[RMDB]
The data come from the RNA Mapping Database (RMDB), library OK1LIB. This 177-nucleotide RNA was probed chemically with 2A3. The reactions ran in a buffer of 150 mM KOAc, 10 mM MgCl2 and 150 mM bicine (pH 8.5), at 24 C.
RNA sequence: GGGAACGACUCGAGUAGAGUCGAAAAACGUGUUUUAAGCUCCAGUAUUCGACGUCUGUGCAUACCGGGAGAGCAAUAACAUAUAUUCGUGCUCAAUCUGCCGGACGUAAGAGGCAGUACGCAAACAGGGAUUGACUCGGUUCGCCGAGUCAAUCCCAAAAGAAACAACAACAACAAC
Reactivity to 2A3 in 0.01 (KOAc 150mM, MgCl2 10mM, bicine 150mM(pH8.5), 24C), signal-to-noise 1, nucleotides 027 to 126: a000c010g000u100g000u240u110u010u020a060a090g040c130u130c020c020a000g070u000a110u000u300c020g000a000c000g220u100c000u000g300u180g010c090a080u090a160c000c030g070g190g000a070g050a000g000c040a000a000u160a070a000c200a030u130a000u180a070u000u300c070g140u000g080c000u000c000a000a070u000c000u000g100c000c040g000g000a080c000g000u000a030a030g040a020g000g000c040a000g000u070a020c040g080c000a130a120a130c040a080